[RMDB]
RNA sequence: GGGAACGACUCGAGUAGAGUCGAAAAGAUAUGGAACGAUUUGAUGGAGAUGCCGGUCGGAAACGACCGACAUCUAUGAAGUCACUGAUCGUUCCUAAGUCAAACGCGUCGCGUUCGCGCGACGCGACCUAUAGUUAGGCUUCGGCCUAACUAUAGGAAAAGAAACAACAACAACAAC
Reactivity to DMS in 0.01 (KOAc 150mM, MgCl2 10mM, bicine 150mM(pH8.5), 24C), signal-to-noise 4, nucleotides 027 to 126: g010a040u000a250u010g000g000a020a000c000g010a010u000u000u010g010a090u000g030g000a040g030a010u000g010c020c000g010g010u000c000g010g010a040a060a130c010g010a010c000c010g020a000c000a010u000c000u000a110u020g010a140a290g000u000c020a070c300u010g000a020u000c010g000u000u010c000c000u000a030a090g000u000c020a090a120a180c030g020c010g000u020c000g040c000g020u000u000c240g000c000g050c010g010a020c010g010c000g010a010
Reactivity to 2A3 in 0.01 (KOAc 150mM, MgCl2 10mM, bicine 150mM(pH8.5), 24C), signal-to-noise 5, nucleotides 027 to 126: g010a000u030a010u090g000g000a000a020c010g000a020u020u030u160g300a300u060g100g180a110g000a050u000g010c000c000g000g010u010c000g000g000a080a020a010c010g010a000c000c020g010a000c010a000u000c010u000a130u090g080a050a050g180u300c000a010c090u070g030a010u000c000g000u010u000c000c000u000a020a000g010u000c040a130a030a070c030g000c010g010u000c010g000c020g060u090u120c300g000c000g010c000g140a000c000g000c000g000a010

The record gives the reactivity of an RNA of 177 nucleotides to DMS and 2A3.
Conditions: 150 mM KOAc, 10 mM MgCl2 and 150 mM bicine (pH 8.5), 24 C.
Values are in units of 0.01, from 0 to 300, in steps of 10.
The DMS profile rests on 5,154 reads.